[RMDB]
RNA sequence: GGGAACGACUCGAGUAGAGUCGAAAAAAAGAUAUGGACCAUAUCGUUUGAUGAACUACGGUCGGGCUCAUUCGGAAACGAAUGAGUCUCUAGCGUGCCGCAUCAGACAUAUGGUCCUAAGUCAAAACCCUUGUUCAUAGUUCGCUAUGAACAAGGGAAAAGAAACAACAACAACAAC
Reactivity to DMS in 0.01 (KOAc 150mM, MgCl2 10mM, bicine 150mM(pH8.5), 24C), signal-to-noise 2, nucleotides 027 to 126: a040a040a110g000a010u010a300u000g020g000a010c010c000a000u000a000u000c230g000u010u000u010g020a030u000g000a140a060c050u030a190c010g030g000u000c250g020g020g000c000u000c010a000u010u000c020g000g000a090a050a210c000g020a010a010u010g000a010g020u000c000u010c150u010a110g010c260g000u010g040c150c140g020c000a010u000c010a010g010a000c000a040u000a010u000g000g000u000c000c000u000a000a010g020u000c010a060a080a090a190
Reactivity to 2A3 in 0.01 (KOAc 150mM, MgCl2 10mM, bicine 150mM(pH8.5), 24C), signal-to-noise 1, nucleotides 027 to 126: a000a000a000g070a020u070a030u100g000g000a000c010c000a040u010a000u030c240g010u000u010u020g010a000u000g040a100a070c070u110a060c260g110g150u020c010g050g000g000c010u000c010a000u000u000c000g010g010a060a080a070c000g000a000a010u010g000a000g000u020c010u010c010u000a060g110c060g230u290g080c020c090g030c030a000u010c000a000g000a010c010a030u010a010u000g000g000u000c000c000u010a000a010g000u000c010a020a010a070a110
Description:
An RNA of 177 nucleotides, treated with DMS and 2A3 and read out base by base. It was measured as part of the RMDB library TTRDES. 2A3 is a SHAPE reagent: it acylates the 2'-hydroxyl of flexible nucleotides of all four kinds. The reactions ran in a buffer of 150 mM KOAc, 10 mM MgCl2 and 150 mM bicine (pH 8.5), at 24 C. High DMS reactivity at an A or C suggests that its Watson-Crick edge is free. The 2A3 profile rests on 2,850 reads.